RNA sequence: GGGAACGACUCGAGUAGAGUCGAAAAGAACUGGCAAAAGGCGGCAGGGAGCUUGUGGAAGGCGAAACAGGAGGUAUCCCGUGUAGAAACAGGGUUUUCACCCUUCCUUUCUUCUGCGGUUUCCUUCACUACUAGUCAAGUUCGCUUGACUAGUAGUAAAAGAAACAACAACAACAAC
Reactivity to 2A3 in 0.01 (KOAc 150mM, MgCl2 10mM, bicine 150mM(pH8.5), 24C), signal-to-noise 4, nucleotides 027 to 126: g030a060a040c050u030g050g000c030a000a000a070a150g060g010c040g020g000c020a030g020g020g010a020g000c050u090u080g030u040g070g040a050a020g030g020c020g030a080a060a030c080a050g020g010a010g010g020u040a050u050c020c000c000g020u020g010u040a040g020a050a080a150c300a140g040g010g000u070u030u130u240c100a060c000c010c000u020u030c020c000u020u030u030c000u030u030c020u060g030c020g010g030u010u040u020c000c000u030u030c010
Reactivity to DMS in 0.01 (KOAc 150mM, MgCl2 10mM, bicine 150mM(pH8.5), 24C), signal-to-noise 6, nucleotides 027 to 126: g000a100a100c060u000g010g010c070a060a050a100a080g000g000c090g000g010c060a060g010g000g000a070g010c060u000u000g030u000g010g010a090a070g000g010c050g000a070a070a070c140a100g010g010a030g000g010u010a080u000c100c000c010g020u000g020u000a030g000a040a020a020c180a020g000g000g010u000u010u010u010c200a090c020c010c000u000u000c020c010u000u000u000c010u000u000c050u010g020c100g000g010u000u010u000c010c010u000u000c050